Chemical mapping of a 207-nucleotide RNA with DMS and 2A3.
The data come from the RNA Mapping Database (RMDB), library M2RFPK.
Conditions: 150 mM KOAc, 10 mM MgCl2 and 150 mM bicine (pH 8.5), 24 C.
[RMDB]
RNA sequence: GGGAACGACUCGAGUAGAGUCGAAAAUCCGACGAGCUGAACGCUUUCGAAGGAAAGCUUGACCAGCUAAUCUUCUGCAACGCCAUUACGAGGACUGUCCUUAGAGGCUCAUGGCGAUAGGUCACCCAAAACUAUUUGAGGUUCGCCUCAAAUAGAAUCAACACGCAGUGUUCGCACUGCGUGUUGAAAAAGAAACAACAACAACAAC
Reactivity to DMS in 0.01 (KOAc 150mM, MgCl2 10mM, bicine 150mM(pH8.5), 24C), signal-to-noise 1, nucleotides 027 to 156: u010c030c050g020a090c080g020a040g050c010u010g010a090a160c060g000c000u000u000u000c010g050a300a130g040g010a040a030a040g000c000u010u000g020a210c100c000a080g000c010u010a050a130u010c010u010u010c080u000g020c000a080a130c030g020c010c010a040u010u000a100c060g000a090g000g000a140c050u000g000u000c000c040u000u000a160g020a230g000g000c030u000c010a010u000g030g010c020g000a080u000a040g000g010u000c010a170c020c010c000a100a110a130a240c020u000a020u000u030u010g000a000g020g000u000u000c300g000c010c000u010c000a000a010a020u000a000g000a040a060
Reactivity to 2A3 in 0.01 (KOAc 150mM, MgCl2 10mM, bicine 150mM(pH8.5), 24C), signal-to-noise 3, nucleotides 027 to 156: u020c020c010g010a050c030g010a030g000c000u010g060a100a040c080g020c000u010u050u060c050g100a090a040g140g010a120a030a000g000c000u050u080g120a070c020c020a010g000c030u040a070a120u040c080u130u030c040u090g060c040a100a070c010g000c000c010a050u080u110a090c100g030a040g050g080a100c040u100g070u080c000c000u070u080a080g010a070g150g000c010u010c010a010u040g000g000c000g030a050u100a030g060g000u000c010a070c000c010c010a000a160a010a050c000u000a000u000u010u000g000a010g030g020u050u090c210g030c070c000u000c000a000a000a000u000a000g000a000a050